[RMDB]
This 177-nucleotide RNA was probed chemically with 2A3 and DMS.
For 2A3 the reverse transcriptase was SuperScript II with manganese.
Conditions: 150 mM KOAc, 10 mM MgCl2 and 150 mM bicine (pH 8.5), 24 C.
For 2A3, 1,254 sequencing reads were counted.
RNA sequence: GGGAACGACUCGAGUAGAGUCGAAAAUAGGGAAAAACUAAGACACGCUAUAACUAACUACAGUGUCUUAAUACGUAGAUAAUAUGACUACGUUUUGGGCGAUGUUAGUCAUAAAACAAUUCAUACCCCUAUUUACUGCCUUCGGGCAGUAAAUAGGAAAAGAAACAACAACAACAAC
Reactivity to 2A3 in 0.01 (KOAc 150mM, MgCl2 10mM, bicine 150mM(pH8.5), 24C), signal-to-noise 1, nucleotides 027 to 126: u060a030g000g020g070a050a020a000a050a050c050u030a060a000g020a010c000a010c050g060c040u080a070u030a290a150c130u050a040a000c030u080a060c060a060g000u000g000u040c000u010u000a020a020u120a060c050g040u030a010g040a170u120a210a080u090a140u160g050a020c000u000a000c020g020u010u000u090u040g020g000g010c040g000a000u010g000u030u000a000g010u010c020a000u070a020a140a020a010c020a030a070u090u050c020a040u100a180c050c000
Reactivity to DMS in 0.01 (KOAc 150mM, MgCl2 10mM, bicine 150mM(pH8.5), 24C), signal-to-noise 2, nucleotides 027 to 126: u000a060g040g030g000a060a010a050a070a160c160u000a010a020g020a040c010a020c010g000c110u040a160u000a100a110c150u000a060a090c060u000a120c120a120g020u000g040u000c000u000u010a010a030u000a030c180g000u000a030g030a120u010a100a200u010a060u000g000a050c000u000a000c020g000u000u000u000u000g020g060g020c150g000a000u000g020u010u000a030g000u000c030a010u020a010a050a060a090c150a110a070u000u030c090a100u000a190c120c100